About this RNA
Chemical mapping of a 207-nucleotide RNA with 2A3. Source: RMDB library M2RFPK, as collected in RNAgym.
RNA sequence: GGGAACGACUCGAGUAGAGUCGAAAAACAGAAGGGUGAAAGUUCAAGCAAGCUAGCCGGCAAAAAAGCAAACUUGACCACCCAGGAUAAAAGAGAUCUUAUCCAAGGAUGCAAAAGAUAAUCUCACAAAAGCUUCAUUCGUUCGCGAAUGAAGCAAGACGAAGGUAUUCUUCGGAAUACCUUCGUCAAAAGAAACAACAACAACAAC
Reactivity to 2A3 in 0.01 (KOAc 150mM, MgCl2 10mM, bicine 150mM(pH8.5), 24C), signal-to-noise 2, nucleotides 027 to 156: a010c090a040g120a120a120g010g000g000u050g030a270a120a020g040u070u010c020a050a000g000c000a120a000g000c040u050a010g070c000c060g120g010c140a100a150a080a010a000a000g040c060a090a070a030c000u020u050g000a030c000c010a000c010c000c000a000g000g000a020u090a070a090a030a010g020a000g000a020u020c050u030u040a010u000c020c010a050a070g090g010a090u190g060c020a050a050a000a050g000a020u080a070a020u070c000u010c070a050c040a040a100a050a010g000c000u010u030c000a000u000u010c000g020u030u080c200g000c000g170a000a000u010g000a000a000g000c000a000a000
For 2A3 the reverse transcriptase was SuperScript II with manganese.
Conditions: 150 mM KOAc, 10 mM MgCl2 and 150 mM bicine (pH 8.5), 24 C.